[RMDB]
RNA sequence: GGGAACGACUCGAGUAGAGUCGAAAAUGCGAAAGGAUGGACUAACUGGAUGACAAGGACCACCAGGCCAGGCAUAAGUGUUCGUAGCGAGGAUGGGAAAGCAUGCGCGUACGGAAACCAUCCCGAACCUUAACGCAGACGUGCAUGCGAAAGGAUGGCAUAGGACUACGUUCGCGUAGUCCUAUGCAAAAGAAACAACAACAACAAC
Reactivity to 2A3 in 0.01 (KOAc 150mM, MgCl2 10mM, bicine 150mM(pH8.5), 24C), signal-to-noise 2, nucleotides 027 to 156: u090g000c050g030a130a020a050g000g040a060u090g040g030a060c030u080a140a070c010u080g000g020a050u070g100a060c050a050a030g070g000a060c000c000a000c040c030a040g060g000c000c000a050g000g090c070a040u050a200a000g050u050g080u190u110c050g060u060a000g010c040g010a020g030g010a000u020g010g080g000a080a020a000g000c000a000u020g020c000g010c000g030u110a100c050g030g000a070a040a010c020c010a040u060c000c000c000g020a080a070c020c010u060u050a090a030c080g000c050a000g000a160c010g020u040g000c010a000u020g000c000g010a040a000a000g150g000a060u140g070